[RMDB]
RNA sequence: GGGAACGACUCGAGUAGAGUCGAAAAGAAGGACUAUGAAUGUUUACAGCUAUCAUACUGAUGUGUACUUUAGAUGGAGGCCUCUGUCGAGCAGUAGCCCACCCUGUUGUAGUUAACGAUCUAAUCUCCUGUACUCUACUACUAGGCGAAGGUGUUAACUGACUAACACCUUCGGGUGUUAGUCAGUAAAAGAAACAACAACAACAAC
Reactivity to 2A3 in 0.01 (KOAc 150mM, MgCl2 10mM, bicine 150mM(pH8.5), 24C), signal-to-noise 1, nucleotides 027 to 156: g060a040a050g060g010a020c060u040a000u160g020a130a010u070g130u090u080u100a070c060a010g040c050u030a030u180c050a020u020a200c080u090g110a100u060g080u020g020u070a060c020u020u170u130a040g000a120u060g020g000a050g010g010c020c020u030c030u060g050u010c010g030a020g000c000a010g000u050a020g000c050c000c010a030c000c000c000u000g020u030u030g020u000a060g010u000u120a020a000c050g030a030u050c010u100a120a110u050c030u040c040c000u000g030u100a130c030u050c020u040a060c020u010a020c000u070a040g010g070c050g070a090a060g060g010u080g030u100u050a040
Reactivity to DMS in 0.01 (KOAc 150mM, MgCl2 10mM, bicine 150mM(pH8.5), 24C), signal-to-noise 1, nucleotides 027 to 156: g000a090a060g010g020a100c050u000a040u000g010a110a130u020g010u000u010u010a090c060a040g010c030u000a130u000c050a070u000a080c060u000g040a090u000g020u010g080u000a070c020u000u000u000a040g030a100u010g010g010a200g020g000c020c010u000c030u000g040u010c050g030a080g020c050a080g020u000a040g000c030c010c020a110c080c020c030u010g010u000u000g000u000a090g000u000u000a050a110c060g020a070u000c080u000a050a130u000c030u020c040c010u000g000u000a050c040u000c060u010a040c060u000a090c120u000a060g000g020c030g010a050a060g020g000u000g010u000u000a080